The data come from the RNA Mapping Database (RMDB), libraries RFM100 and RFMREP. An RNA of 177 nucleotides, treated with 2A3 and DMS and read out base by base. The reactions ran in a buffer of 150 mM KOAc, 10 mM MgCl2 and 150 mM bicine (pH 8.5), at 24 C.

RNA sequence: GGGAACGACUCGAGUAGAGUCGAAAAAUGCAGAUUUUCAGCGGUAACGCAUAUGAACUUGGUGACAUUGGCAUGGGCCCUAGGAAAAGUUAUCUUUUUUCUUUAACAGUCUGUAACCCUGGAAACGCUUAUUGAGUUCGUUCGCGAACUCAAUAAGAAAAGAAACAACAACAACAAC
Reactivity to 2A3 in 0.01 (KOAc 150mM, MgCl2 10mM, bicine 150mM(pH8.5), 24C), signal-to-noise 6, nucleotides 027 to 126: a000u130g000c010a010g040a050u080u040u010u120c040a020g020c020g050g040u060a070a040c030g010c040a030u050a090u210g070a090a070c040u100u080g040g030u100g040a030c030a090u060u110g050g060c040a040u040g060g070g040c000c000c010u020a040g050g020a040a040a010a020g030u100u080a130u110c040u040u050u000u000u040u010c020u020u050u010a080a030c030a010g000u010c000u000g040u060a080a110c000c000c000u000g020g000a060a050a000c030g000
Reactivity to DMS in 0.01 (KOAc 150mM, MgCl2 10mM, bicine 150mM(pH8.5), 24C), signal-to-noise 4, nucleotides 027 to 126: a070u030g010c010a030g000a050u000u020u020u010c120a060g000c040g000g000u020a080a080c070g000c060a130u030a110u000g040a050a080c140u010u010g010g030u010g010a050c110a080u020u020g010g010c060a070u020g000g020g000c020c030c050u000a030g000g000a020a010a040a040g010u000u010a090u020c020u000u020u010u000u020u000c020u010u020u000a070a080c160a110g020u010c020u000g000u000a050a090c040c000c010u000g000g000a060a050a050c170g000